The record gives the reactivity of an RNA of 177 nucleotides to DMS. The data come from the RNA Mapping Database (RMDB), library RFMREP. For DMS the reverse transcriptase was MarathonRT. The RNA was probed in 150 mM KOAc, 10 mM MgCl2 and 150 mM bicine (pH 8.5) at 24 C.
RNA sequence: GGGAACGACUCGAGUAGAGUCGAAAAUAAGAGAUGCAGCUCCUGACUUCUCCUCUGAUCUUCGUGAUCAGAGUUUUGAGUCGUCAGACUACGAGCAGUUUCUCUUAGUCGUUGCAUCGGGUGCUGUACAGUCCUUAAAGUUCGCUUUAAGGACUGUAAAAGAAACAACAACAACAAC
Reactivity to DMS in 0.01 (KOAc 150mM, MgCl2 10mM, bicine 150mM(pH8.5), 24C), signal-to-noise 2, nucleotides 027 to 126: u010a010a030g010a030g000a020u010g010c000a080g020c000u000c000c000u000g000a020c000u010u000c010u000c010c000u000c000u010g000a000u000c000u010u030c260g000u010g000a010u000c000a000g000a010g010u000u010u010u010g030a010g040u000c080g010u000c010a010g010a130c160u010a110c300g010a020g010c030a060g030u010u000u000c000u000c000u000u000a020g000u000c050g010u000u000g000c030a080u000c120g000g000g010u010g000c040u000g000u000